[RMDB]
An RNA of 207 nucleotides, treated with 2A3 and DMS and read out base by base. For DMS, 4,280 sequencing reads were counted.
RNA sequence: GGGAACGACUCGAGUAGAGUCGAAAACGCCGUAUGUGUCUGGGACGCGAUUCGGCUACCUUUAUGGUAUUGAUGACAAUUUUAUCUUAGUUUAGUAAAACUAAGCAUUUCUUAAUGACCUUAGAAAUGACCAAGGCCUUUUAUGUACACCCAGCAGCAAUAAGCCAUACUUCGGUAUGGCUUAUUGAAAAGAAACAACAACAACAAC
Reactivity to 2A3 in 0.01 (KOAc 150mM, MgCl2 10mM, bicine 150mM(pH8.5), 24C), signal-to-noise 3, nucleotides 027 to 156: c070g010c010c000g000u030a070u300g040u050g030u010c040u090g020g010g110a190c000g000c020g010a030u040u030c000g000g030c010u040a030c000c010u050u130u060a190u180g020g000u030a060u030u140g170a130u120g020a040c110a220a220u020u010u010u030a010u000c010u010u000a000g000u000u020u020a080g080u180a060a040a000a000c000u000a010a000g000c000a000u030u040u000c000u000u090a120a090u160g100a080c000c010u020u020a000g030a020a020a010u000g000a010c000c060a020a030g010g000c010c000u100u120u050u110a140u190g120u060a020c040a030c060c000c000a000g000c020a010g000
Reactivity to DMS in 0.01 (KOAc 150mM, MgCl2 10mM, bicine 150mM(pH8.5), 24C), signal-to-noise 2, nucleotides 027 to 156: c060g000c000c020g000u000a040u000g040u010g010u000c010u000g010g000g030a290c050g020c060g000a300u010u010c010g000g020c060u000a030c000c010u000u000u020a110u010g030g000u010a090u000u000g010a150u000g010a140c080a080a100u000u000u010u010a020u010c000u000u000a020g020u000u000u000a180g000u000a030a030a030a030c010u000a020a010g020c170a040u000u000u010c040u010u010a090a100u000g010a050c070c060u010u000a040g010a070a160a110u000g000a160c050c040a020a040g020g040c010c020u010u010u000u000a070u030g040u000a040c050a080c020c020c010a140g000c050a080g020